RNA sequence: GGGAACGACUCGAGUAGAGUCGAAAAACGUUGAUAUGGAUUUACUCCGAGGAGACGAACUACCACGAACAGGGGAAACUCUACCCGUGGCGUCUCCUUUUGACGAGUAAGUCCUAAGUCAACAUGCGGCGCUCGAGCUUCGGCUCGAGCAAAAGAAACAACAACAACAAC
Reactivity to DMS in 0.01 (KOAc 150mM, MgCl2 10mM, bicine 150mM(pH8.5), 24C), signal-to-noise 2, nucleotides 027 to 129: a130c060g030u050u000g000a060u020a130u130g000g000a090u070u080u000a000c020u040c000c000g040a100g060g010a040g010a000c000g000a010a040c090u110a250c080c060a000c060g000a080a270c020a210g030g050g000g000a010a030a020c010u030c000u000a120c300c110c020g000u000g090g000c000g000u020c000u040c000c010u130u010u010u000g000a150c300g000a020g000u010a000a040g020u140c030c030u010a010a030g000u000c000a020a000c000a150u050g090c040g050g030c090